RNA sequence: GGGAACGACUCGAGUAGAGUCGAAAAGAUAUGGAAAUCCACGACAUGGGUGUCGGAAACGACACUCCAACAGCGUGAUUUCCUAAGUCAAAAGAAAUUUCGUUUAGUUCGCUAAACGAAAUUUCAACCUGGUAUAGAACUUCGGUUCUAUACCAGGAAAAGAAACAACAACAACAAC
Reactivity to 2A3 in 0.01 (KOAc 150mM, MgCl2 10mM, bicine 150mM(pH8.5), 24C), signal-to-noise 2, nucleotides 027 to 126: g030a010u070a030u090g000g040a020a010a020u110c300c040a030c020g130a090c060a120u130g020g000g000u020g000u000c000g010g010a040a040a030c000g000a010c000a000c090u060c020c000a070a000c030a020g070c000g000u000g000a000u010u000u000c000c000u010a100a040g030u000c050a040a010a130a160g010a000a000a000u000u000u000c000g010u000u010u000a010g010u020u070c300g010c180u000a020a000a000c010g000a000a000a000u000u000u000c000a000a000
Reactivity to DMS in 0.01 (KOAc 150mM, MgCl2 10mM, bicine 150mM(pH8.5), 24C), signal-to-noise 3, nucleotides 027 to 126: g000a040u010a300u010g010g000a020a000a000u000c070c040a020c000g000a080c160a270u000g020g000g000u000g010u010c010g010g000a070a070a170c000g050a010c000a010c000u000c010c070a030a070c210a190g000c010g040u000g020a080u000u000u000c000c000u020a040a080g000u000c070a070a110a070a110g010a010a010a020u000u000u000c000g020u000u000u000a020g010u000u010c200g000c010u000a010a000a010c000g000a000a000a000u000u010u000c000a040a090

An RNA of 177 nucleotides, treated with 2A3 and DMS and read out base by base. For 2A3 the reverse transcriptase was SuperScript II with manganese. For DMS, 2,064 sequencing reads were counted. Reactivities are rounded to 0.1 and cut off at 0 and 3.